[RMDB]
RNA sequence: GGGAACGACUCGAGUAGAGUCGAAAAUGACUUCCGGGACGCCAAAGUUAUCCCGCAGGAACGGAAUUUCGUCAGGGCGGUAACGCAGCAGCCACAGGGUGUUGGCGGAUUUGAGCACGGCCGGAGGCCUGUCGAUUCGUUUCGACGAAUCGACAGGAAAAGAAACAACAACAACAAC
Reactivity to DMS in 0.01 (KOAc 150mM, MgCl2 10mM, bicine 150mM(pH8.5), 24C), signal-to-noise 3, nucleotides 027 to 126: u000g010a170c030u000u000c030c020g020g020g010a140c150g000c050c030a030a060a030g010u010u000a220u010c120c010c010g010c080a070g020g000a110a040c010g000g020a120a140u000u010u010c020g040u020c140a220g000g020g000c030g000g000u000a070a110c020g000c040a080g000c020a050g000c010c040a130c160a120g010g020g000u010g000u010u000g000g000c010g000g000a160u000u000u000g020a100g020c030a190c110g000g010c020c010g000g010a050g000g000
Reactivity to 2A3 in 0.01 (KOAc 150mM, MgCl2 10mM, bicine 150mM(pH8.5), 24C), signal-to-noise 1, nucleotides 027 to 126: u100g020a030c000u010u000c020c000g020g000g030a020c060g000c020c010a000a020a040g020u060u050a030u080c000c020c000g000c010a020g000g090a070a010c010g010g150a210a210u130u240u160c000g050u030c030a090g090g100g000c010g000g020u010a050a010c010g000c030a010g000c000a000g020c010c010a150c080a160g160g030g040u050g050u170u050g060g010c000g000g030a010u000u000u050g050a030g000c040a020c070g030g010c010c030g020g000a010g020g000